[RMDB]
RNA sequence: GGGAACGACUCGAGUAGAGUCGAAAAGCGUACUACGAAUGGAACUACCUUCCCGUUGGAGUCGAUAAGUCCCAAAUAGGACUUUUGACGACUCCGAUGGGAAGGCCAUUCGUAUCGCAAAGGCAUUAGUGAUACGUUCGCGUAUCACUAAUGCCAAGUUUUUAGACAUGUUCGCAUGUCUAAAAACAAAAGAAACAACAACAACAAC
Reactivity to 2A3 in 0.01 (KOAc 150mM, MgCl2 10mM, bicine 150mM(pH8.5), 24C), signal-to-noise 6, nucleotides 027 to 156: g010c010g030u090a100c060u000a000c060g010a000a010u000g000g020a100a050c070u140a120c300c000u000u000c000c000c000g000u000u000g000g000a000g000u000c000g020a050u020a070a000g000u020c020c030c040a160a250a050u300a080g010g000a000c020u040u030u060u150g250a140c010g000a000c000u000c000c000g000a020u010g000g000g000a000a000g020g000c030c000a000u030u010c000g000u020a000u070c000g000c000a030a030a110g000g000c000a000u000u000a000g000u010g000a000u050a010c010g030u050u080c300g050c000g120u000a000u000c000a000c000u000a000a000u000g000c000c000a000a000
Reactivity to DMS in 0.01 (KOAc 150mM, MgCl2 10mM, bicine 150mM(pH8.5), 24C), signal-to-noise 2, nucleotides 027 to 156: g000c030g040u000a050c100u000a010c000g000a050a020u010g000g000a070a080c030u010a300c000c000u010u000c000c000c000g090u000u000g000g010a010g050u010c000g000a150u010a060a030g010u000c010c000c020a070a180a240u020a060g010g000a000c000u000u000u000u000g000a250c050g010a010c010u010c000c010g020a010u000g000g020g020a000a010g010g020c000c000a020u000u000c000g030u000a010u000c000g020c020a100a100a100g020g020c010a030u000u000a000g010u000g010a020u010a000c000g000u000u010c300g010c030g030u000a010u000c000a000c010u000a000a010u000g010c000c000a000a000
Overview:
Source: RMDB library RNAMAK, as collected in RNAgym. Structure probing data (2A3 and DMS) for a 207-nucleotide construct. The reactions ran in a buffer of 150 mM KOAc, 10 mM MgCl2 and 150 mM bicine (pH 8.5), at 24 C. For DMS, 4,458 sequencing reads were counted. For 2A3, 7,395 sequencing reads were counted.